[RMDB]
RNA sequence: GGGAACGACUCGAGUAGAGUCGAAAAGGUGCGCCGCGUGAUCGAGCAUUACCGCGAAUUGCAGGACGUGAUCGCGUUGCUCGGCAUCGAUGAGCUCGGCGCGGACGACCGGCGGCUCGUCGGCCGACCAGUGCUGCCAGUUCGCUGGCAGCACUGGAAAAGAAACAACAACAACAAC
Reactivity to DMS in 0.01 (KOAc 150mM, MgCl2 10mM, bicine 150mM(pH8.5), 24C), signal-to-noise 1, nucleotides 027 to 126: g010g000u010g000c040g000c050c010g000c070g010u000g010a100u020c000g020a080g020c010a050u010u000a090c300c020g010c000g010a070a100u000u010g050c040a160g010g010a230c240g000u000g000a030u000c000g000c030g000u010u010g010c000u000c010g010g000c030a030u010c030g010a060u000g010a130g000c110u000c010g010g000c010g010c010g010g000a070c070g030a070c000c030g010g010c050g000g000c080u050c040g010u010c010g000g040c030c000g000a110
Reactivity to 2A3 in 0.01 (KOAc 150mM, MgCl2 10mM, bicine 150mM(pH8.5), 24C), signal-to-noise 2, nucleotides 027 to 126: g100g000u090g050c050g000c020c010g000c010g030u060g050a200u120c020g000a020g000c000a050u020u190a060c110c000g030c000g010a110a210u020u040g000c020a040g150g170a050c130g020u040g000a030u020c020g000c010g020u020u030g030c040u030c040g000g000c010a100u090c040g060a090u070g060a020g030c030u000c030g000g010c200g020c000g120g020a010c020g020a030c010c030g010g000c000g050g020c030u050c090g050u000c020g000g030c000c000g010a020